[RMDB]
RNA sequence: GGGAACGACUCGAGUAGAGUCGAAAACUAACAAUAGGCUGAAUAUCACCAUUGAGCCAGCAACUCUUAAUCUCAAAUGUCCUAUCAUAUUGGCUCAACCAUUUAUCAAUGCCAUGUGUGGUGAUCCAUACUAAGACGUGUUCGCACGUCUUAGUAUAAAAGAAACAACAACAACAAC
Reactivity to 2A3 in 0.01 (KOAc 150mM, MgCl2 10mM, bicine 150mM(pH8.5), 24C), signal-to-noise 6, nucleotides 027 to 126: c010u060a060a000c030a070a110u060a110g060g000c030u060g050a100a050u090a030u130c040a030c050c010a020u010u050g020a010g000c010c010a010g060c030a020a150c020u030c020u120u190a130a150u070c030u030c130a090a100a110u110g040u040c000c020u070a050u140c030a050u060a100u170u080g010g010c010u000c020a020a060c030c010a050u040u120u120a170u130c100a090a040u130g030c010c010a070u050g050u020g010u030g040g010u020g000a020u000c020c020
Reactivity to DMS in 0.01 (KOAc 150mM, MgCl2 10mM, bicine 150mM(pH8.5), 24C), signal-to-noise 5, nucleotides 027 to 126: c030u000a100a070c120a090a080u000a080g010g030c070u000g010a100a090u010a080u000c070a040c060c080a170u000u000g000a030g010c030c010a060g020c170a060a070c080u000c080u000u000a080a100u010c040u010c050a040a050a070u010g000u000c020c020u010a060u010c060a070u010a100u010u010g010g010c020u000c080a040a040c110c080a080u010u000u010a060u010c100a080a070u010g000c030c030a070u010g000u000g010u000g010g020u000g010a060u000c150c090